[RMDB]
RNA sequence: GGGAACGACUCGAGUAGAGUCGAAAAGUCACGUGGUACGCCACGUGACAACCGGAAACGGAGAUGACGAUCGGGCGCAUCUUAGGAAACUAUAAACGCCAAAGCGAGGAGUUACGACUCCUCGCAACCCUCGGUACUCGUUCGCGAGUACCGAGGGAAAAGAAACAACAACAACAAC
Reactivity to 2A3 in 0.01 (KOAc 150mM, MgCl2 10mM, bicine 150mM(pH8.5), 24C), signal-to-noise 1, nucleotides 027 to 126: g020u020c000a000c100g000u040g040g020u090a100c170g040c010c000a030c000g000u020g150a000c000a000a000c000c000g110g040a070a020a030c060g090g000a020g010a030u030g050a020c080g070a070u290c010g130g000g000c000g010c000a010u000c020u000u090a000g000g040a020a070a000c030u000a020u090a180a120a030c100g000c010c000a140a030a000g000c000g000a000g000g000a000g000u020u000a080c110g030a000c060u010c000c010u020c000g000c000a000a000